[RMDB]
Structure probing data (DMS and 2A3) for a 177-nucleotide construct. 2A3 adducts were read by reverse transcription with SuperScript II with manganese. For 2A3, 2,041 sequencing reads were counted.
RNA sequence: GGGAACGACUCGAGUAGAGUCGAAAAGAGCUGGGAACGUACGAAACGCGGAAAGUACGGAAACGCGGAAAGAUCAGCAACACGGAAGUAUACGAAAGAAAACGUGGAAAAAGUAUACGAAAGAAAAGGGAUAUACUUUCUUCGGAAAGUAUAUCCCAAAAGAAACAACAACAACAAC
Reactivity to DMS in 0.01 (KOAc 150mM, MgCl2 10mM, bicine 150mM(pH8.5), 24C), signal-to-noise 2, nucleotides 027 to 126: g030a080g000c000u010g000g000g040a110a180c050g010u050a020c060g010a050a130a040c070g000c020g000g000a020a170a280g030u010a050c060g000g000a090a150a120c100g020c040g060g000a100a090a130g020a120u010c040a060g000c080a100a200c050a070c030g000g000a070a140g010u000a000u000a060c000g010a040a120a080g000a080a040a050a090c010g010u000g010g050a010a040a120a020a130g000u000a000u000a030c030g000a090a100a080g020a030a010a090a040
Reactivity to 2A3 in 0.01 (KOAc 150mM, MgCl2 10mM, bicine 150mM(pH8.5), 24C), signal-to-noise 2, nucleotides 027 to 126: g080a010g000c000u060g010g080g000a090a110c030g040u120a000c090g030a020a070a030c050g010c030g090g000a170a120a040g050u000a020c000g000g120a030a160a000c080g000c030g020g000a000a110a000g020a010u040c050a030g040c000a020a000c010a020c030g010g000a010a040g010u000a000u000a040c000g060a200a010a120g080a040a130a010a020c060g000u100g070g040a030a000a010a030a000g010u000a010u010a040c000g020a040a120a080g170a000a030a020a050